[RMDB]
RNA sequence: GGGAACGACUCGAGUAGAGUCGAAAAACGGUGAGUAUACGUACUCACCGAAACACACAGCAUCGUACCUAGAGUCUGUCCCCAGACAUUGUACCUGGAGCUGUUAGGCCAGAAUUAAAGUGUUUAAUCAUAUGCGAUUUUUCGAAAUCGCAUAUGAAAAAGAAACAACAACAACAAC
Reactivity to DMS in 0.01 (KOAc 150mM, MgCl2 10mM, bicine 150mM(pH8.5), 24C), signal-to-noise 5, nucleotides 027 to 126: a080c040g020g030u010g010a000g030u000a040u010a060c230g050u010a020c000u010c000a000c000c000g010a020a030a070c120a080c120a070c090a070g020c060a070u010c070g020u000a070c040c050u000a080g010a050g020u000c000u030g010u010c030c030c050c060a100g000a050c060a080u010u020g010u000a080c090c030u000g010g000a060g010c050u000g010u020u010a100g020g000c020c020a060g010a120a060u020u010a060a090a090g000u000g010u010u010u000a100a120
Reactivity to 2A3 in 0.01 (KOAc 150mM, MgCl2 10mM, bicine 150mM(pH8.5), 24C), signal-to-noise 9, nucleotides 027 to 126: a000c020g000g000u010g010a010g000u020a020u020a070c300g050u020a000c010u000c000a010c000c000g000a000a060a000c040a000c010a010c000a020g040c010a100u050c030g070u050a020c010c040u090a070g010a030g100u020c010u070g120u140c030c000c010c010a010g030a020c030a060u080u110g020u050a030c000c040u080g060g010a030g030c010u030g070u150u080a070g030g030c010c020a040g070a110a070u250u170a130a080a040g070u050g070u050u030u060a040a050